[RMDB]
RNA sequence: GGGAACGACUCGAGUAGAGUCGAAAAGAAGCAGUCCUUAUUGUGUGUGAUGUUUAGUCAUCGCACUGUUCCUACGGGCUGCCAACGUAGGACCAAUGUGCCGAGAGGCACUAGAAGUACGGCUUAUUAUGAGGCAUCGCCGUACCAAAGAUGCUGAAUUUUACUACUGGUUCGCCAGUAGUAAAAUAAAAGAAACAACAACAACAAC
Reactivity to 2A3 in 0.01 (KOAc 150mM, MgCl2 10mM, bicine 150mM(pH8.5), 24C), signal-to-noise 4, nucleotides 027 to 156: g120a040a010g010c020a000g020u060c030c030u130u150a260u270u190g090u040g000u000g000u000g030a020u020g100u030u150u240a240g120u140c010a000u010c010g000c000a000c010u020g050u030u030c000c010u010a020c010g000g020g000c020u020g010c000c020a060a010c010g080u080a040g020g050a010c020c060a090a100u110g000u000g000c010c000g020a040g010a040g030g000c000a000c000u010a020g020a140a000g020u040a000c000g000g000c010u070u060a080u120u080a120u300g110a070g060g030c030a020u040c030g000c000c000g030u040a020c000c010a030a090a000g040a010u060g020c010u030g010a070
Reactivity to DMS in 0.01 (KOAc 150mM, MgCl2 10mM, bicine 150mM(pH8.5), 24C), signal-to-noise 5, nucleotides 027 to 156: g010a130a070g020c030a060g000u000c010c010u000u000a090u000u000g030u010g030u000g030u000g020a040u000g020u000u010u000a220g010u000c020a020u010c010g010c000a020c010u010g010u010u000c030c020u010a100c110g020g010g020c040u000g030c000c070a050a040c080g010u000a060g010g020a160c070c040a080a130u000g010u000g010c020c010g010a290g010a300g020g010c000a020c010u000a030g010a150a080g020u000a020c010g010g000c010u000u000a130u000u000a120u010g010a210g020g000c040a090u000c130g020c020c010g000u000a030c040c020a080a080a150g010a130u000g010c010u000g010a110
The record gives the reactivity of an RNA of 207 nucleotides to 2A3 and DMS.
2A3 adducts were read by reverse transcription with SuperScript II with manganese.
The RNA was probed in 150 mM KOAc, 10 mM MgCl2 and 150 mM bicine (pH 8.5) at 24 C.
For DMS, 12,901 sequencing reads were counted.